The record gives the reactivity of an RNA of 170 nucleotides to 2A3 and DMS. The RNA was probed in 150 mM KOAc, 10 mM MgCl2 and 150 mM bicine (pH 8.5) at 24 C.
RNA sequence: GGGAACGACUCGAGUAGAGUCGAAAAGGACGACAAACCGUAGGUACUCUUGCCCUUUAUUGUUGGGUGCACCCUGGGACCCAGUAAUACCCGGGGGGAGGCGGGGUUAACCCAUACUAUGGGAACUGGACUUCUUCGUUCGCGAAGAAGAAAAGAAACAACAACAACAAC
Reactivity to 2A3 in 0.01 (KOAc 150mM, MgCl2 10mM, bicine 150mM(pH8.5), 24C), signal-to-noise 7, nucleotides 027 to 129: g020g010a030c040g000a020c110a040a120a020c020c030g030u040a040g000g060u060a070c010u010c010u090u100g050c010c000c000u040u110u070a150u090u100g100u040u030g010g010g010u040g020c020a090c010c010c020u040g000g040g000a050c000c010c020a000g020u040a020a050u070a140c010c010c000g010g000g010g010g010g000a050g010g020c050g010g030g010g000u030u070a030a030c000c000c000a030u120a180c110u130a100u050g000g000g000a030a000c050u020g010g040a020
Reactivity to DMS in 0.01 (KOAc 150mM, MgCl2 10mM, bicine 150mM(pH8.5), 24C), signal-to-noise 5, nucleotides 027 to 129: g000g040a080c000g030a070c110a070a150a090c080c060g020u000a040g000g000u040a090c090u020c070u010u010g060c010c000c010u020u030u040a080u040u040g010u000u000g000g000g000u000g040c100a080c040c020c020u030g000g000g000a050c000c010c010a030g020u010a040a030u060a090c000c040c020g000g020g030g010g010g030a020g010g010c060g000g030g000g070u000u000a100a080c030c000c050a040u040a050c140u040a020u000g000g010g020a070a080c040u040g010g000a300
For DMS the reverse transcriptase was MarathonRT.